RNA sequence: GGGAACGACUCGAGUAGAGUCGAAAAUGUUACACAGGAGGCGGUAUGAAGGAGGAAAGGAACUCUACGGUGAUCACGCCCGCCCCAUGCGGGAAAUGAAAGAAGAGGCGCAAAGUGAGCUGCAGGAUGAAAAUUUAAAUUUCGAUUUAAAUUUUCAAAAAGAAACAACAACAACAAC
Reactivity to DMS in 0.01 (KOAc 150mM, MgCl2 10mM, bicine 150mM(pH8.5), 24C), signal-to-noise 2, nucleotides 027 to 126: u010g010u010u000a080c080a120c090a130g010g020a070g010g020c070g010g000u000a060u000g010a080a060g010g000a050g000g020a050a040a100g010g000a060a060c050u000c020u010a090c090g010g010u010g000a110u000c070a090c160g010c020c000c030g010c030c070c090c130a120u010g010c060g000g000g030a030a030a070u010g010a070a070a130g000a070a040g030a040g010g000c050g020c080a040a030a090g010u010g000a090g010c050u010g000c090a050g000g000a140